The record gives the reactivity of an RNA of 177 nucleotides to DMS and 2A3. The data come from the RNA Mapping Database (RMDB), library OK2TRN. DMS adducts were read by reverse transcription with MarathonRT. The reactions ran in a buffer of 150 mM KOAc, 10 mM MgCl2 and 150 mM bicine (pH 8.5), at 24 C.
RNA sequence: GGGAACGACUCGAGUAGAGUCGAAAAGAGCGAUUUAAUAUUAGAUCGUCGCGAUCUAAAGAGUCCGACACGCUGUCGCGGGGCAGCACCUCCCGGGAAAGGGCCCUUGGUGCGGAUUCGAAAGAAAAUGAUAUAGUCGAUUCGUCGACUAUAUCAUAAAAGAAACAACAACAACAAC
Reactivity to DMS in 0.01 (KOAc 150mM, MgCl2 10mM, bicine 150mM(pH8.5), 24C), signal-to-noise 6, nucleotides 027 to 126: g010a140g040c020g010a040u000u010u000a080a160u010a190u000u000a020g010a020u000c020g020u000c210g020c090g010a020u000c020u000a030a070a160g010a030g020u000c000c010g010a110c040a050c060g010c080u000g010u000c030g020c120g000g010g000g010c030a060g000c040a130c070c040u000c040c020c030g010g000g010a060a100a120g010g010g000c030c020c020u000u010g020g010u000g010c030g010g000a040u000u000c010g010a090a090a090g000a040a060a090
Reactivity to 2A3 in 0.01 (KOAc 150mM, MgCl2 10mM, bicine 150mM(pH8.5), 24C), signal-to-noise 5, nucleotides 027 to 126: g090a010g010c010g000a010u020u120u290a290a170u210a220u220u120a030g020a020u020c010g150u100c080g050c090g140a010u000c020u050a050a090a070g010a010g000u010c020c010g050a140c050a010c060g130c060u060g010u060c020g010c030g090g000g050g000c020a040g020c010a050c010c010u050c030c020c030g020g030g010a170a160a050g050g030g030c000c000c000u000u070g060g000u020g000c000g000g000a020u040u020c020g020a000a060a010g080a010a120a010